An RNA of 177 nucleotides, treated with 2A3 and DMS and read out base by base.
Reactivities are given for positions 27 through 126.
For 2A3 the reverse transcriptase was SuperScript II with manganese.
Source: RMDB library OK2TRN, as collected in RNAgym.
Conditions: 150 mM KOAc, 10 mM MgCl2 and 150 mM bicine (pH 8.5), 24 C.

RNA sequence: GGGAACGACUCGAGUAGAGUCGAAAAAUUAUCGCGCGAUAGCGGCGUAUCGCGCGUAUUAUCGCGCGGCGAUAGCGGCGCGCCGCGCGAUACGCAUAUAUUAUGCGAUACGCAUAAUACGCGCGGCCACUCGAACUAAAUUCGUUUAGUUCGAGUGAAAAGAAACAACAACAACAAC
Reactivity to 2A3 in 0.01 (KOAc 150mM, MgCl2 10mM, bicine 150mM(pH8.5), 24C), signal-to-noise 6, nucleotides 027 to 126: a000u210u140a100u150c010g000c010g000c010g300a300u030a060g120c150g050g000c010g020u000a000u010c030g010c000g000c010g020u010a040u050u100a040u030c010g000c000g010c030g030g000c010g050a070u070a080g130c080g060g000c030g000c010g000c040c010g040c030g000c000g010a000u010a000c000g000c020a010u090a020u050a050u280u160a100u300g010c000g000a030u010a050c010g000c000a000u070a070a030u060a040c020g000c000g010c000g010g000c020
Reactivity to DMS in 0.01 (KOAc 150mM, MgCl2 10mM, bicine 150mM(pH8.5), 24C), signal-to-noise 5, nucleotides 027 to 126: a090u010u010a070u000c010g020c000g020c000g000a110u000a070g020c280g010g000c010g000u000a010u000c000g030c000g030c020g020u000a020u000u010a070u000c030g010c000g020c010g010g020c010g010a070u010a080g020c020g010g000c040g000c010g000c060c010g020c000g010c000g010a000u000a000c060g040c030a150u010a120u010a090u010u010a070u010g000c010g010a060u000a020c040g010c010a030u020a050a160u000a030c020g010c010g000c010g000g000c300